[RMDB]
RNA sequence: GGGAACGACUCGAGUAGAGUCGAAAAGGAAUGCCGGUUCCUGUACCCUCGGAAGGAGGGGCAGAGUGUGGAGAACAAGCCCAAGAAUCACUACAAGAACAUCCUUCCCUGUGAGGGCGGAGGCCAGUAAUACUCAGUUGUUCGCAACUGAGUAUUAAAAAGAAACAACAACAACAAC
Reactivity to 2A3 in 0.01 (KOAc 150mM, MgCl2 10mM, bicine 150mM(pH8.5), 24C), signal-to-noise 6, nucleotides 027 to 126: g020g010a120a040u070g040c040c030g060g000u040u040c010c010u020g060u290a300c000c010c010u000c030g110g090a140a070g170g010a010g020g010g030g000c010a010g030a050g040u080g010u060g040g070a090g020a090a020c060a130a040g040c000c010c010a020a040g060a040a040u070c020a010c060u120a060c060a140a020g030a100a040c020a070u030c000c000u020u040c010c000c010u120g090u100g090a080g010g030g000c030g040g010a060g000g020c000c000a020g030
Reactivity to DMS in 0.01 (KOAc 150mM, MgCl2 10mM, bicine 150mM(pH8.5), 24C), signal-to-noise 9, nucleotides 027 to 126: g000g010a080a060u010g010c040c050g020g010u010u000c020c010u000g020u010a170c010c000c000u000c030g010g020a110a090g000g010a020g010g010g010g010c090a040g000a100g010u000g010u000g000g000a140g010a080a070c140a090a140g010c020c010c020a100a100g010a160a130u000c030a040c030u000a080c150a060a090g010a070a060c090a080u000c020c010u000u000c010c000c100u000g000u010g010a070g010g010g010c160g020g000a120g000g010c040c090a090g020

The record gives the reactivity of an RNA of 177 nucleotides to 2A3 and DMS. For 2A3 the reverse transcriptase was SuperScript II with manganese. The reactions ran in a buffer of 150 mM KOAc, 10 mM MgCl2 and 150 mM bicine (pH 8.5), at 24 C. The DMS profile rests on 18,008 reads.